[RMDB]
Structure probing data (DMS and 2A3) for a 177-nucleotide construct.
For 2A3, 1,119 sequencing reads were counted.
It was measured as part of the RMDB library 15KREP.
Reactivities are rounded to 0.1 and cut off at 0 and 3.
RNA sequence: GGGAACGACUCGAGUAGAGUCGAAAAGUUAUGUUUGAAGAUGCCCAAGGUUUGAAAAAGUUCUACAAAGAAGUUAGAGCUUACCUAGGAAUCUCUUCUGCUUGUGACGGUCUUGCUUCAGCUUAUAGUUAUUCAGUUUGUUCGCAAACUGAAUAACAAAAGAAACAACAACAACAAC
Reactivity to DMS in 0.01 (KOAc 150mM, MgCl2 10mM, bicine 150mM(pH8.5), 24C), signal-to-noise 2, nucleotides 027 to 126: g020u000u010a050u000g020u010u000u010g010a040a050g000a020u000g000c130c010c010a100a080g010g000u010u000u010g010a050a040a040a030a010g030u010u000c010u010a020c060a130a130a220g010a090a120g010u010u000a020g010a010g010c020u000u000a020c020c010u010a170g020g000a140a080u000c090u000c030u000u000c020u000g000c030u000u010g000u010g010a070c080g010g010u010c040u000u000g000c050u010u000c090a070g020c070u000u010a080u000a120
Reactivity to 2A3 in 0.01 (KOAc 150mM, MgCl2 10mM, bicine 150mM(pH8.5), 24C), signal-to-noise 1, nucleotides 027 to 126: g030u040u040a050u130g080u010u130u170g040a010a000g000a010u040g010c020c020c000a000a030g060g000u050u130u300g120a030a020a020a000a010g010u000u040c000u010a020c040a060a260a030g190a160a000g120u090u020a000g010a010g000c030u000u000a000c000c010u000a030g050g000a040a030u020c010u000c000u080u000c010u020g020c000u070u100g050u010g020a020c000g060g000u000c020u030u060g030c020u030u050c010a030g000c030u080u120a100u030a150